Description
The data come from the RNA Mapping Database (RMDB), library M2PK50. The record gives the reactivity of an RNA of 177 nucleotides to DMS and 2A3. High DMS reactivity at an A or C suggests that its Watson-Crick edge is free. For DMS, 1,787 sequencing reads were counted. 2A3 adducts were read by reverse transcription with SuperScript II with manganese. The RNA was probed in 150 mM KOAc, 10 mM MgCl2 and 150 mM bicine (pH 8.5) at 24 C.

RNA sequence: GGGAACGACUCGAGUAGAGUCGAAAAUCUCCGUGAUUCGUCACGGAGAAACAUAAAUAAAAUGGGUUCAACUCCCACCCUUUUCCGAGGGUAUCGGAAACCAACCUUCGCUCUUCGGAGCGAAGAAACUGUAAUCUAUAUUCGUAUAGAUUACAGUAAAAGAAACAACAACAACAAC
Reactivity to DMS in 0.01 (KOAc 150mM, MgCl2 10mM, bicine 150mM(pH8.5), 24C), signal-to-noise 3, nucleotides 027 to 126: u000c010u000c000c000g020u010g000a040u000u030c240g030u000c000a000c000g000g000a010g000a000a060a090c070a160u010a080a130a130u010a050a050a110a100u000g000g000g000u010u000c200a110a300c170u000c000c000c000a260c030c000c010u030u000u020u000c010c000g020a010g020g000g000u000a040u000c020g000g000a010a010a090c300c100a080a050c110c020u000u000c000g020c020u000c010u000u000c190g010g000a010g000c010g000a020a000g010a020a060
Reactivity to 2A3 in 0.01 (KOAc 150mM, MgCl2 10mM, bicine 150mM(pH8.5), 24C), signal-to-noise 4, nucleotides 027 to 126: u000c000u000c000c010g000u010g000a020u050u080c170g010u000c110a000c000g020g000a020g000a000a000a000c010a020u300a080a100a020u240a060a100a040a080u050g010g020g000u080u130c040a040a020c080u020c020c000c000a020c000c000c010u070u160u020u000c000c010g000a000g020g040g170u180a040u030c000g000g000a020a000a000c030c020a010a070c010c010u010u000c010g010c000u020c000u060u070c230g120g000a010g000c000g010a000a010g000a020a010